RNA sequence: GGGAACGACUCGAGUAGAGUCGAAAAGGUGAGCAAAGCAUGCUCCUGGAGGGAUGCAGCUAGAGGGGAAGCAGCUGUUUGGAAGACCCCAGAGUGGCUGGUCUGCUGCUCCUGCCAUGGCUCAUUGGGGCAGUAUGGCAGACUUCCUGCCUGGCCAGAUCCGGCCAAAGUUCGCUUUGGCCGGAUCAAAAGAAACAACAACAACAAC
Reactivity to 2A3 in 0.01 (KOAc 150mM, MgCl2 10mM, bicine 150mM(pH8.5), 24C), signal-to-noise 1, nucleotides 027 to 156: g050g000u070g000a030g010c040a020a120a000g080c040a110u070g000c040u060c040c070u050g020g070a020g030g050g000a030u100g000c050a000g000c010u030a120g020a050g030g020g010g000a020a000g000c000a000g020c010u020g080u030u110u140g020g070a020a080g080a100c000c000c000c000a030g000a050g110u050g010g020c050u010g010g030u070c030u010g000c040u000g000c000u000c000c000u000g050c010c010a080u050g050g020c000u070c080a120u100u280g070g020g000g000c010a010g020u160a040u080g020g030c020a000g050a100c000u070u040c070c010u000g000c000c020u020g020g000c000c000a000
Chemical mapping of a 207-nucleotide RNA with 2A3.
For 2A3 the reverse transcriptase was SuperScript II with manganese.
It was measured as part of the RMDB library OK3TST.